[RMDB]
RNA sequence: GGGAACGACUCGAGUAGAGUCGAAAAGAUAUGGACUGGUGUAGGGAGCGUCGUGGUCGGAAACGACCACACGCAUCGAUCUACCCAGUCCUAAGUCAAAACGGCGCGACGUUCGCGUCGCGCCGAACAUGUCAAUUAAGUUCGCUUAAUUGACAUGAAAAGAAACAACAACAACAAC
Reactivity to DMS in 0.01 (KOAc 150mM, MgCl2 10mM, bicine 150mM(pH8.5), 24C), signal-to-noise 4, nucleotides 027 to 126: g000a040u010a130u030g000g010a010c000u000g010g000u000g010u000a010g000g020g010a170g020c020g020u010c300g040u000g000g020u000c000g030g010a030a040a080c000g020a020c000c000a010c000a000c000g020c010a100u000c300g000a120u010c000u000a000c000c000c000a020g000u000c000c000u000a000a040g000u000c010a090a100a150a230c070g040g070c130g150c110g140a100c110g070u010u000c190g020c080g100u000c040g080c060g070c060c030g000a020a080
Reactivity to 2A3 in 0.01 (KOAc 150mM, MgCl2 10mM, bicine 150mM(pH8.5), 24C), signal-to-noise 3, nucleotides 027 to 126: g010a010u020a010u070g000g000a000c000u010g030g000u220g030u120a020g000g120g130a300g040c010g010u110c140g040u050g000g020u000c000g000g030a010a010a010c010g000a010c000c000a010c000a000c000g000c020a040u220c170g110a190u000c000u000a000c000c000c000a000g000u010c000c000u000a000a000g000u010c000a000a010a070a140c040g010g020c050g030c030g090a020c070g060u100u210c300g010c030g090u000c010g040c000g000c010c010g000a000a000